Notes: Chemical mapping of a 207-nucleotide RNA with 2A3 and DMS. Values cover nucleotides 27 to 156. It was measured as part of the RMDB library OK3TST. The reactions ran in a buffer of 150 mM KOAc, 10 mM MgCl2 and 150 mM bicine (pH 8.5), at 24 C. For 2A3 the reverse transcriptase was SuperScript II with manganese. For DMS the reverse transcriptase was MarathonRT.
[RMDB]
RNA sequence: GGGAACGACUCGAGUAGAGUCGAAAAGGAGAGAUGAAGUAGAAUUUGAGGUGCAUGGUCAAUGAUUGUUUACAGAGAAGGGACUUGCUAGGGAUACAUCAUUGCUUUUCCAUUCAUGCAAGUAUCAUUGUGUUUUUCAGGAUCUCUGAGACCUCAAUAAAAUGGCACCUUUCGAGGUGCCAUUUUAAAAAGAAACAACAACAACAAC
Reactivity to 2A3 in 0.01 (KOAc 150mM, MgCl2 10mM, bicine 150mM(pH8.5), 24C), signal-to-noise 2, nucleotides 027 to 156: g010g010a090g000a020g010a050u110g020a090a000g080u070a030g050a140a140u040u010u130g030a030g020g000u010g020c060a070u060g030g030u020c020a010a060u080g040a020u100u030g040u050u060u050a040c050a000g080a020g030a100a070g070g020g010a020c020u010u040g050c000u020a050g050g000g000a010u020a100c020a030u090c040a110u050u180g000c030u100u030u090u000c030c030a050u020u150c070a020u090g000c000a010a050g020u040a070u100c050a020u060u030g020u000g030u030u150u000u010u000c020a030g030g080a110u000c080u000c020u060g000a020g030a060c020c030u030c040a030a000
Reactivity to DMS in 0.01 (KOAc 150mM, MgCl2 10mM, bicine 150mM(pH8.5), 24C), signal-to-noise 2, nucleotides 027 to 156: g000g000a060g000a040g010a030u010g000a060a080g030u000a100g030a080a100u000u000u010g000a070g030g010u000g020c040a100u010g020g010u010c030a050a130u000g000a120u010u010g000u010u010u000a160c020a080g000a140g010a100a050g000g010g000a070c040u010u010g000c010u010a180g030g010g010a130u020a030c050a050u000c090a090u000u000g030c010u010u000u000u000c020c030a150u010u010c100a120u000g040c040a030a050g010u000a050u000c030a070u020u000g000u000g010u010u000u000u000u000c010a160g020g000a060u000c030u000c050u010g030a100g000a070c120c010u010c010a000a300